Conditions: 150 mM KOAc, 10 mM MgCl2 and 150 mM bicine (pH 8.5), 24 C.
An RNA of 177 nucleotides, treated with DMS and 2A3 and read out base by base.
It was measured as part of the RMDB library TTRDEL.
For DMS the reverse transcriptase was MarathonRT.
For DMS, 2,416 sequencing reads were counted.
RNA sequence: GGGAACGACUCGAGUAGAGUCGAAAAGAUAUGGAGAUUGAACUACACGGUAGGGUUCGUUGAUCUCGGAAACGAGGGAGAACCCAAACGUGCAAUCUCCUAAGUCAAACAGCUGUUCGCAGCUGAAGUAGCUUAAACUGUUCGCAGUUUAAGCUACAAAAGAAACAACAACAACAAC
Reactivity to DMS in 0.01 (KOAc 150mM, MgCl2 10mM, bicine 150mM(pH8.5), 24C), signal-to-noise 3, nucleotides 027 to 126: g000a030u010a300u000g000g010a030g000a030u010u000g010a060a050c090u000a300c000a000c000g000g000u010a300g010g010g000u000u000c000g020u000u010g010a000u010c000u000c010g000g010a110a070a230c000g010a020g020g010g010a040g030a020a000c010c000c000a010a020a070c020g000u000g000c000a000a000u000c010u000c000c010u000a000a080g010u000c040a130a140a290c010a000g010c000u000g010u010u000c170g040c020a040g020c000u000g000a070a120
Reactivity to 2A3 in 0.01 (KOAc 150mM, MgCl2 10mM, bicine 150mM(pH8.5), 24C), signal-to-noise 3, nucleotides 027 to 126: g030a020u080a050u140g010g000a000g020a000u010u020g020a100a090c070u170a070c300a000c000g020g050u080a040g010g010g050u010u000c000g070u250u010g000a000u020c010u000c000g010g000a040a070a030c010g010a000g010g000g010a030g000a000a000c030c000c000a000a000a000c010g000u010g030c000a000a010u000c010u020c000c000u000a030a000g020u010c030a090a060a120c000a000g000c000u010g050u110u160c300g000c190a010g000c000u010g000a080a010